This 207-nucleotide RNA was probed chemically with 2A3.
[RMDB]
RNA sequence: GGGAACGACUCGAGUAGAGUCGAAAAAGGGAGACUUGACUAAAGGUGAUUACGUUAUUGUAACUCAGUCAAUGUGGGCUAAGAUGAUCAGUCGAGUUCUUAUUGUGACUGAUGCUCAAGAAACGGAAAUUACACUUGCUGGCAUUGACACAACGGAGAGCACUCCUCUAUUCGUAGAGGAGUGCUCAAAAGAAACAACAACAACAAC
Reactivity to 2A3 in 0.01 (KOAc 150mM, MgCl2 10mM, bicine 150mM(pH8.5), 24C), signal-to-noise 2, nucleotides 027 to 156: a020g030g000g000a050g000a010c010u020u070g020a020c020u160a050a040a000g030g000u000g040a070u070u000a040c060g010u060u120a090u070u030g020u010a010a030c010u010c150a010g030u010c000a010a020u060g010u050g030g000g000c020u050a020a100g010a100u140g010a020u030c030a000g010u020c000g120a060g040u070u140c090u150u250a230u140u290g090u060g030a000c000u000g000a000u060g020c010u010c070a070a050g050a040a070a070c050g030g070a000a140a030u130u040a030c030a020c040u030u110g000c010u020g000g000c000a040u030u090g000a010c020a000c000a070a040c070g180g000a120
The RNA was probed in 150 mM KOAc, 10 mM MgCl2 and 150 mM bicine (pH 8.5) at 24 C.